[RMDB]
RNA sequence: GGGAACGACUCGAGUAGAGUCGAAAAUCAUCGGCAAUCUUUGUGGUCUUAGCUUUAUUGUGGAGCUUGUUGAGCUGCGUCGAGACUCAAUAAUACUCGGAGCAAUCAAAAACGCACUGGGUUUUGACGGUACAAUUUACUUCGGUAAAUUGUACCGAAAAGAAACAACAACAACAAC
Reactivity to DMS in 0.01 (KOAc 150mM, MgCl2 10mM, bicine 150mM(pH8.5), 24C), signal-to-noise 2, nucleotides 027 to 126: u000c040a050u000c070g000g000c060a080a070u010c070u000u000u000g030u010g000g000u000c050u000u000a040g000c050u000u000u020a110u030u000g020u000g010g010a090g020c110u000u000g000u000u000g000a030g020c070u000g020c120g020u000c070g000a120g020a080c070u000c040a040a050u010a040a090u020a070c010u000c020g010g000a060g020c030a050a060u020c110a020a030a030a070a090c180g030c050a070c040u010g000g000g000u000u000u000u000g000a130